Record summary: An RNA of 207 nucleotides, treated with 2A3 and DMS and read out base by base. 2A3 adducts were read by reverse transcription with SuperScript II with manganese. Values cover nucleotides 27 to 156. The DMS profile rests on 3,100 reads. The reactions ran in a buffer of 150 mM KOAc, 10 mM MgCl2 and 150 mM bicine (pH 8.5), at 24 C.
[RMDB]
RNA sequence: GGGAACGACUCGAGUAGAGUCGAAAACAACAAUCGUAAAAGAUAUACUUUACAAUGUCAACCCAUUUGUUAACGAUAUAGUCGUUGUUAACCCCACUGACAAGUUAAAUAAAGAUUAUUCGGGAAAUAAUAAUGUGCCCGCGCCAUUAGUGCACGACGUAAUCAUACGUUUCGACGUAUGAUUACGAAAAGAAACAACAACAACAAC
Reactivity to 2A3 in 0.01 (KOAc 150mM, MgCl2 10mM, bicine 150mM(pH8.5), 24C), signal-to-noise 4, nucleotides 027 to 156: c030a020a010c020a040a050u130c050g080u110a080a100a100a040g090a060u130a010u060a190c000u030u060u050a010c010a060a070u060g030u100c060a060a060c050c010c000a050u060u090u110g100u040u040a030a050c040g020a030u030a010u030a220g120u050c110g000u010u020g020u000u120a120a110c010c010c000c030a010c070u050g030a000c020a110a010g030u110u070a150a070a090u120a100a180a000g050a050u120u100a050u150u190c070g020g020g060a090a070a030u140a050a020u110a050a070u190g010u050g060c030c040c020g010c030g040c030c020a100u100u100a040g020u040g090c040a020c070g080a000
Reactivity to DMS in 0.01 (KOAc 150mM, MgCl2 10mM, bicine 150mM(pH8.5), 24C), signal-to-noise 2, nucleotides 027 to 156: c040a060a060c030a090a100u010c050g010u020a070a060a080a120g030a200u000a150u000a090c060u010u010u010a050c000a020a100u000g010u000c090a130a210c030c030c020a120u000u000u000g030u000u000a090a060c040g000a090u000a070u000a110g000u000c030g040u000u000g000u010u000a140a060c030c030c010c020a150c100u010g000a080c070a090a150g010u000u000a040a050a080u000a070a000a090g010a050u000u000a050u020u000c020g000g000g030a080a100a060u000a030a070u010a050a060u000g030u000g000c040c030c100g010c100g020c020c050a120u010u010a030g030u000g050c010a070c020g030a140
The 2A3 profile rests on 1,871 reads.